[RMDB]
RNA sequence: GGGAACGACUCGAGUAGAGUCGAAAAUCGGAGCUGUGGCCCCAGUUCCACAGUCACAUCUCGUCAACCGCAGUCUACUGAAAUGUCCCUCCGGUCUCUAUGCAAAGGGGCCAGCCCUCGUCGAUGUGGGCAUACUAUUAUUCGUAAUAGUAUGCCCAAAAGAAACAACAACAACAAC
Reactivity to 2A3 in 0.01 (KOAc 150mM, MgCl2 10mM, bicine 150mM(pH8.5), 24C), signal-to-noise 7, nucleotides 027 to 126: u130c010g030g000a010g020c020u030g000u100g070g010c020c000c000c030a030g040u080u020c010c000a030c010a020g070u060c010a040c000a140u040c030u040c040g120u070c050a050a060c020c030g040c030a030g030u010c020u080a100c040u090g040a080a090a110u140g020u030c020c010c010u020c010c020g020g010u010c010u000c010u040a100u160g100c060a070a090a090g020g000g010g000c010c010a010g010c000c000c000u070c030g080u050c050g010a060u100g030u050
Reactivity to DMS in 0.01 (KOAc 150mM, MgCl2 10mM, bicine 150mM(pH8.5), 24C), signal-to-noise 2, nucleotides 027 to 126: u020c080g000g000a110g010c010u000g040u000g000g010c040c010c060c000a150g030u010u020c020c030a080c130a120g010u020c070a060c120a010u000c000u000c040g030u040c030a140a080c040c060g000c030a070g010u010c060u000a060c020u010g000a070a090a100u030g010u000c030c010c000u010c100c030g000g000u010c000u000c000u000a030u010g030c160a060a100a070g030g000g000g000c000c020a030g000c020c000c000u010c110g010u050c030g020a120u040g020u030